Record summary:
An RNA of 177 nucleotides, treated with 2A3 and read out base by base. Values cover nucleotides 27 to 126.

RNA sequence: GGGAACGACUCGAGUAGAGUCGAAAAAACUGUCCAAUUAAGAUUCACAACAAUCAAUCAUUCUAUUGUUUGAUUGUUAGGUAAGGACCCAGGUAAGCUAUUUAUACUCUAGACAUGUGAAUAUUCCGCCUGCUGGUAAUUUCGAUUACCAGCAGGCAAAAGAAACAACAACAACAAC
Reactivity to 2A3 in 0.01 (KOAc 150mM, MgCl2 10mM, bicine 150mM(pH8.5), 24C), signal-to-noise 2, nucleotides 027 to 126: a000a000c090u060g040u000c000c000a010a020u150u060a270a030g030a030u020u030c030a020c010a010a020c000a000a000u000c000a000a000u050c000a020u220u240c050u250a200u040u260g040u000u000u000g000a000u000u000g000u020u030a010g000g000u000a000a130g000g010a020c000c010c000a000g050g020u130a110a000g020c020u000a110u110u240u020a110u100a050c060u000c060u120a010g020a120c100a170u120g000u080g020a020a050u070a210u200u000c070c020